This 177-nucleotide RNA was probed chemically with 2A3 and DMS. It was measured as part of the RMDB library OK2TST.
[RMDB]
RNA sequence: GGGAACGACUCGAGUAGAGUCGAAAAGCGGGUCGCCGAGGCGCGGAUUCCGACUCGUCAUGGGGAGUUUCGCGCCAUCGGCUACACCAGCAUCUACGAGGACGUGGAACAUGUCGCGCUGGUCCGCCCAAUUGUUGGAGUUCGCUCCAACAAUUGGAAAAGAAACAACAACAACAAC
Reactivity to 2A3 in 0.01 (KOAc 150mM, MgCl2 10mM, bicine 150mM(pH8.5), 24C), signal-to-noise 3, nucleotides 027 to 126: g010c010g030g010g010u060c050g000c020c000g000a010g010g000c000g000c010g040g000a010u060u000c020c000g190a170c070u050c130g300u150c130a250u240g010g000g080g050a040g020u030u100u200c010g000c000g000c040c010a080u020c000g020g000c000u000a000c000a030c000c000a000g000c010a040u030c020u080a060c040g050a090g180g130a060c010g030u030g000g040a110a060c070a110u110g070u140c050g000c030g000c130u020g010g010u000c000c010g000c000
Reactivity to DMS in 0.01 (KOAc 150mM, MgCl2 10mM, bicine 150mM(pH8.5), 24C), signal-to-noise 3, nucleotides 027 to 126: g010c010g000g020g010u010c190g010c020c020g010a050g000g000c000g010c010g020g010a030u000u000c050c020g020a240c060u020c150g020u010c210a110u010g020g010g000g010a080g020u010u000u000c010g000c010g010c000c000a030u000c000g000g000c010u000a030c280a090c020c020a040g000c030a130u000c030u020a070c070g010a160g000g010a060c030g010u010g000g000a120a140c080a060u000g010u000c070g020c130g000c000u000g000g000u010c020c030g010c050